[RMDB]
RNA sequence: GGGAACGACUCGAGUAGAGUCGAAAACAGGAGCUUAGCAUAGCUCCAUUCUACUAUGCAGCUAGUCGUCGUUUUCGACGUCUAGGAUAGACCCCUACAGCAGGGUCAAUGAACUGCUGAUUACCGCAUCUCGUAGCGCGGGUUCUGGCUACGUACAAUUAUGAGUCGCAUUCGUGCGACUCAUAAUAAAAGAAACAACAACAACAAC
Reactivity to DMS in 0.01 (KOAc 150mM, MgCl2 10mM, bicine 150mM(pH8.5), 24C), signal-to-noise 1, nucleotides 027 to 156: c090a140g070g020a000g000c060u000u000a180g040c060a050u000a040g020c010u000c120c150a060u010u000c070u000a040c040u010a030u000g020c010a260g000c000u000a040g000u000c000g000u010c010g050u000u010u040u000c060g020a040c000g000u000c010u010a020g020g010a300u000a120g000a080c000c000c000c000u000a300c000a110g020c020a070g000g020g040u020c020a100a140u040g010a060a080c010u000g010c010u010g000a270u000u000a100c060c000g010c020a150u000c040u000c000g030u000a020g040c010g080c010g040g020g020u000u010c020u000g010g040c000u000a060c010g000u000a080c110a110
Reactivity to 2A3 in 0.01 (KOAc 150mM, MgCl2 10mM, bicine 150mM(pH8.5), 24C), signal-to-noise 2, nucleotides 027 to 156: c030a030g000g020a000g000c000u040u010a070g110c090a240u180a110g000c020u000c000c000a020u010u020c010u020a110c020u030a070u150g050c020a080g080c000u010a000g010u010c020g000u010c010g040u100u050u080u300c050g030a000c000g000u000c000u000a000g000g020a020u060a060g030a000c010c000c000c100u090a120c090a000g020c010a010g000g040g000u040c080a090a130u150g080a100a040c000u000g000c000u000g010a120u090u140a040c000c030g000c000a050u010c050u000c150g000u000a000g000c020g010c010g090g060g000u040u090c090u120g080g000c000u010a000c010g000u020a030c110a030